[RMDB]
RNA sequence: GGGAACGACUCGAGUAGAGUCGAAAAGGGUGAGUCUCCCAAGAGGACAUUUGCAUCUUUCAGGUUGCACAACACAAAAAAAGCGGAGGAUCUCAAGGGGUACCUAGGUGCUCUGCUCCACCUGGAGACCACCGCAAGGGUUCGCCCUUGCGGUGGUAAAAGAAACAACAACAACAAC
Reactivity to DMS in 0.01 (KOAc 150mM, MgCl2 10mM, bicine 150mM(pH8.5), 24C), signal-to-noise 1, nucleotides 027 to 126: g040g010g010u050g000a060g000u020c010u000c050c000c110a090a180g020a090g000g010a080c250a010u000u000u000g000c020a020u000c060u000u000u000c110a060g000g040u010u050g020c090a150c230a110a010c180a020c190a000a000a150a050a050a080a030g050c000g000g000a040g000g000a030u000c040u010c180a020a210g000g020g000g000u080a000c000c000u010a070g000g030u020g000c020u010c000u000g000c100u000c000c000a030c030c040u000g000g000a040g000
Reactivity to 2A3 in 0.01 (KOAc 150mM, MgCl2 10mM, bicine 150mM(pH8.5), 24C), signal-to-noise 2, nucleotides 027 to 126: g000g010g000u130g000a110g030u020c050u080c060c000c000a070a020g130a070g060g010a040c050a070u010u070u300g000c020a110u100c030u110u190u140c050a040g110g000u000u100g120c000a010c040a080a130c060a040c150a080a200a100a000a000a000a000g010c040g000g000a000g000g050a010u000c020u020c100a130a000g040g030g030g130u100a130c000c000u040a000g010g010u030g020c020u000c000u010g030c000u020c020c050a030c000c000u000g000g000a000g010

Chemical mapping of a 177-nucleotide RNA with DMS and 2A3.
The reactions ran in a buffer of 150 mM KOAc, 10 mM MgCl2 and 150 mM bicine (pH 8.5), at 24 C.
The data come from the RNA Mapping Database (RMDB), library OK1LIB.
The DMS profile rests on 956 reads.